Structure probing data (2A3 and DMS) for a 177-nucleotide construct.
[RMDB]
RNA sequence: GGGAACGACUCGAGUAGAGUCGAAAAGGGUUUGGAUUACAUCAAUAGUCACAUGAGCAGAAGUAAACAGAACAAGAAGUACUGCGGUUAUUCAAGUUCAAAGUUCACACUAUCGCAAUAUAUUGAACCCUUGAGUUAUAUUCGUAUAACUCAAGGGAAAAGAAACAACAACAACAAC
Reactivity to 2A3 in 0.01 (KOAc 150mM, MgCl2 10mM, bicine 150mM(pH8.5), 24C), signal-to-noise 4, nucleotides 027 to 126: g050g010g010u080u090u080g070g030a080u090u060a040c010a030u050c030a030a090u060a070g060u040c020a020c030a120u080g060a030g010c030a020g010a150a010g050u100a030a030a050c020a040g040a030a020c020a020a030g040a020a000g020u030a010c010u020g040c020g050g010u000u020a060u080u050c020a030a010g010u020u010c010a140a060a040g020u070u070c030a040c000a010c070u050a070u160c020g000c040a060a010u070a010u020a060u180u160g090a100a120
Reactivity to DMS in 0.01 (KOAc 150mM, MgCl2 10mM, bicine 150mM(pH8.5), 24C), signal-to-noise 6, nucleotides 027 to 126: g010g010g020u000u000u010g020g010a100u010u010a070c090a070u000c060a060a080u000a050g010u010c070a050c090a060u000g010a110g020c030a050g010a060a080g010u010a050a060a060c070a090g020a030a020c050a050a250g010a060a050g010u000a010c020u000g030c090g030g020u000u000a130u000u000c040a030a290g000u000u000c040a050a050a130g000u000u000c050a030c090a090c090u000a070u000c050g010c050a050a060u010a050u000a100u000u000g010a070a170
Annotation
The reactions ran in a buffer of 150 mM KOAc, 10 mM MgCl2 and 150 mM bicine (pH 8.5), at 24 C. 2A3 adducts were read by reverse transcription with SuperScript II with manganese. Source: RMDB library M2PK90, as collected in RNAgym.